[RMDB]
An RNA of 177 nucleotides, treated with 2A3 and read out base by base.
The reactions ran in a buffer of 150 mM KOAc, 10 mM MgCl2 and 150 mM bicine (pH 8.5), at 24 C.
The data come from the RNA Mapping Database (RMDB), library RFM100.

RNA sequence: GGGAACGACUCGAGUAGAGUCGAAAACUGUCUGGCUAAUCAUAAAAAAUUGCUCUCCAGAGAGUAUAUUGGAAACAUCCGGAUAUGGGGUUAUAAUUAAAAAUGAAAGCAAAACAGCAUCCUUAAACCCGGUAAAUUUAUUCGUAAAUUUACCGGGAAAAGAAACAACAACAACAAC
Reactivity to 2A3 in 0.01 (KOAc 150mM, MgCl2 10mM, bicine 150mM(pH8.5), 24C), signal-to-noise 2, nucleotides 027 to 126: c000u000g050u060c020u040g020g010c010u010a030a120u040c040a000u160a070a210a000a050a000a050u080u000g030c000u000c000u010c010c040a080g050a020g000a000g300u040a240u030a020u140u060g100g010a110a140a020c000a020u050c000c000g080g000a040u050a120u210g070g000g000g010u040u150a120u030a300a080u120u130a000a160a030a000a030u080g010a020a020a090g010c030a020a020a030a020c010a000g000c010a060u030c020c000u080u100a140a090a010